Overview: Structure probing data (2A3 and DMS) for a 177-nucleotide construct. The RNA was probed in 150 mM KOAc, 10 mM MgCl2 and 150 mM bicine (pH 8.5) at 24 C. For 2A3 the reverse transcriptase was SuperScript II with manganese. Reactivities are given for positions 27 through 126.

RNA sequence: GGGAACGACUCGAGUAGAGUCGAAAACGUGCGUACUGGGCCGCCGGCACAAUGUUCAACCCAGCCGUCUCAGAGGCCGCGGUUCGACUACGAUCAGCCAGCCGGUCAGCGGGGUCCUCCUAGCUAGACUACGGAUAGCAUUCGUGCUAUCCGUAGUAAAAGAAACAACAACAACAAC
Reactivity to 2A3 in 0.01 (KOAc 150mM, MgCl2 10mM, bicine 150mM(pH8.5), 24C), signal-to-noise 1, nucleotides 027 to 126: c030g030u100g000c020g030u060a100c030u040g000g000g030c000c040g030c000c000g020g020c040a020c040a090a130u120g040u130u090c020a040a070c020c010c000a000g040c010c020g110u030c060u050c080a100g060a140g060g000c000c010g070c040g000g000u000u040c080g020a030c010u050a040c080g180a160u090c030a020g030c000c000a010g070c060c000g000g030u010c000a000g040c040g020g000g040g000u060c020c020u040c000c010u030a070g030c030u040a020g040
Reactivity to DMS in 0.01 (KOAc 150mM, MgCl2 10mM, bicine 150mM(pH8.5), 24C), signal-to-noise 3, nucleotides 027 to 126: c110g020u020g010c070g030u010a060c060u000g000g020g020c040c040g010c030c020g010g000c030a080c160a080a090u010g010u000u000c110a090a130c050c020c030a070g010c050c030g000u000c100u010c160a120g000a180g000g000c000c030g020c060g010g000u000u010c060g010a030c050u010a070c140g000a160u010c100a100g000c030c010a070g000c060c040g020g010u000c030a070g010c010g010g000g000g010u000c050c030u000c010c030u000a050g000c090u000a110g000